[RMDB]
RNA sequence: GGGAACGACUCGAGUAGAGUCGAAAAGGCCACCUGUUACUGGUCGAUUUAAGUCAACCUUUACCGCUGAUUCGUGGAACAGAUACUCUCUUCCAUCCUUAACCGGAGGUGGGAAUAUCCUGCAUUCAUCAAUUGGAUGUUUCGACAUCCAAUUGAUAAAAGAAACAACAACAACAAC
Reactivity to 2A3 in 0.01 (KOAc 150mM, MgCl2 10mM, bicine 150mM(pH8.5), 24C), signal-to-noise 5, nucleotides 027 to 126: g060g040c020c000a030c020c040u100g070u210u130a070c040u050g000g020u030c030g020a050u080u110u230a170a070g060u030c040a030a060c010c000u070u070u090a070c020c020g030c100u050g050a160u090u110c060g020u050g030g020a040a040c020a040g010a010u060a080c020u020c000u030c000u190u040c030c020a220u040c020c000u040u050a040a020c020c000g030g000a010g020g000u020g000g020g000a030a030u040a030u040c010c050u030g010c050a120u070u140c010
Reactivity to DMS in 0.01 (KOAc 150mM, MgCl2 10mM, bicine 150mM(pH8.5), 24C), signal-to-noise 6, nucleotides 027 to 126: g020g010c030c020a040c080c050u000g030u010u000a070c120u010g010g010u000c040g010a070u000u010u010a090a150g010u000c040a060a080c060c030u000u000u000a120c060c050g010c090u010g000a070u000u000c100g010u010g010g010a060a110c100a040g010a070u000a050c080u000c020u000c060u000u000c010c010a100u000c000c030u000u010a110a120c240c130g000g000a070g010g000u000g010g010g000a020a040u000a040u000c060c040u000g010c130a150u010u010c120
The record gives the reactivity of an RNA of 177 nucleotides to 2A3 and DMS. For DMS, 5,645 sequencing reads were counted. Source: RMDB library OK2TST, as collected in RNAgym. Reactivities are rounded to 0.1 and cut off at 0 and 3. For 2A3 the reverse transcriptase was SuperScript II with manganese.